[RMDB]
RNA sequence: GGGAACGACUCGAGUAGAGUCGAAAAACCUUUGUGUGUAUGAGGCGUGUUGUCAGCUCGUCGGAAUCCCAUUGGGAUUCCGUACGAGCUUGGAUUUACACGCGUAGUACACACUCUGGUAAACUUUACAUGAUGACUUCGGUCAUCAUGUAAAGAAGUAUUCUGCUACCUUCGGGUAGCAGAAUACAAAAGAAACAACAACAACAAC
Reactivity to 2A3 in 0.01 (KOAc 150mM, MgCl2 10mM, bicine 150mM(pH8.5), 24C), signal-to-noise 2, nucleotides 027 to 156: a000c000c020u000u030u000g020u000g000u000g000u000a000u030g020a030g140g010c020g000u000g000u000u050g000u000c000a000g000c000u000c000g000u000c000g000g010a010a010u000c090c050c210a300u300u300g000g000g000a000u020u000c040c040g010u040a010c000g010a010g000c010u000u010g000g000a010u120u160u260a000c000a000c010g020c000g000u000a060g010u000a000c000a000c000a000c010u000c000u010g020g000u020a210a000a000c000u000u000u000a000c010a000u040g000a000u000g010a000c000u030u040c300g110g000u020c000a000u000c000a000u000g000u000a010a000a000g010a000a000
The record gives the reactivity of an RNA of 207 nucleotides to 2A3. 2A3 adducts were read by reverse transcription with SuperScript II with manganese. The RNA was probed in 150 mM KOAc, 10 mM MgCl2 and 150 mM bicine (pH 8.5) at 24 C.